[RMDB]
RNA sequence: GGGAACGACUCGAGUAGAGUCGAAAACGCCACCCAGGAUCAGCCUGACGGUCUGGCGCAGGCGUUCGUCAUUGGCGCCAACCACAUCGGCGCCGAUUCGGUGGCAUUGGUGUUGGGGGACAACAUCCAUUCAAGGUGUCUUCGGACACCUUGAAUGAAAAGAAACAACAACAACAAC
Reactivity to DMS in 0.01 (KOAc 150mM, MgCl2 10mM, bicine 150mM(pH8.5), 24C), signal-to-noise 3, nucleotides 027 to 126: c160g000c010c010a020c000c020c230a100g060g000a010u000c040a060g000c000c000u000g010a180c180g000g000u010c180u010g010g000c030g070c000a040g020g000c020g020u030u020c100g010u020c160a070u000u020g000g010c020g050c000c000a130a070c170c160a110c250a190u010c140g000g010c010g010c020c020g000a010u000u010c250g010g020u020g000g020c030a080u010u000g000g020u020g000u000u000g000g000g030g000g020a050c030a020a060c070a020u000c040
Reactivity to 2A3 in 0.01 (KOAc 150mM, MgCl2 10mM, bicine 150mM(pH8.5), 24C), signal-to-noise 3, nucleotides 027 to 126: c050g000c000c010a030c020c010c020a060g010g010a000u030c040a030g030c000c000u070g040a130c060g020g130u130c190u130g050g050c070g000c000a010g010g000c020g040u180u110c090g100u120c040a080u020u120g060g020c000g000c000c000a060a090c060c040a080c020a130u190c140g000g000c030g020c040c030g000a000u010u030c000g020g010u010g000g000c000a020u000u070g000g010u010g010u020u000g040g010g020g040g030a010c000a000a000c000a040u000c020

Structure probing data (DMS and 2A3) for a 177-nucleotide construct. DMS adducts were read by reverse transcription with MarathonRT. It was measured as part of the RMDB library OK1LIB. The reactions ran in a buffer of 150 mM KOAc, 10 mM MgCl2 and 150 mM bicine (pH 8.5), at 24 C.